RNA sequence: GGGAACGACUCGAGUAGAGUCGAAAAAUGGCCUGCCUUGGGGAGAAAAAGCAGCAGGUGAAAGGAGGUCAGGAGAAGAUCUGAGAAACAGCCUGCUGUUUUCUGAGGCCCGAAGUGCCCAACAUUAUAACAAAAGCCUAAAACAAGGGUUUUGGGAGUAUACGAUAGAUUUCGAUCUAUCGUAUACAAAAGAAACAACAACAACAAC
Reactivity to DMS in 0.01 (KOAc 150mM, MgCl2 10mM, bicine 150mM(pH8.5), 24C), signal-to-noise 2, nucleotides 027 to 156: a090u000g030g030c030c020u000g020c000c040u010u000g050g000g010g020a130g010a070a090a050a100a090g010c030a030g020c020a050g000g040u000g020a060a150a130g000g000a080g010g010u010c020a120g030g010a200g000a190a160g000a070u000c000u000g020a160g000a130a080a080c040a300g000c000c030u000g010c010u000g020u000u000u000u000c010u010g040a140g000g000c010c020c020g000a030a080g000u010g030c010c000c010a100a060c100a100u000u000a110u000a070a090c070a030a040a020a130g020c010c010u000a050a040a060a130c090a080a180g020g010g020u000u000u000u000g000g010g010a300
Reactivity to 2A3 in 0.01 (KOAc 150mM, MgCl2 10mM, bicine 150mM(pH8.5), 24C), signal-to-noise 4, nucleotides 027 to 156: a000u040g010g010c000c010u010g010c000c000u030u030g050g000g020g000a120g070a050a080a020a020a000g000c000a000g010c000a000g000g010u050g030a090a070a020g080g030a030g000g020u020c010a020g030g140a120g070a090a030g010a060u020c000u050g050a020g300a120a060a030c030a000g300c000c000u000g000c000u000g000u000u010u010u010c000u020g020a020g000g020c000c010c010g070a050a020g040u040g090c010c050c000a030a060c020a110u160u220a130u080a180a020c070a050a090a020a020g060c000c010u100a090a080a040a010c080a080a150g100g030g010u000u010u030u020g040g020g000a020
This 207-nucleotide RNA was probed chemically with DMS and 2A3. The 2A3 profile rests on 3,009 reads. DMS adducts were read by reverse transcription with MarathonRT. DMS (dimethyl sulfate) methylates the pairing face of unpaired adenines and cytosines. For DMS, 3,425 sequencing reads were counted.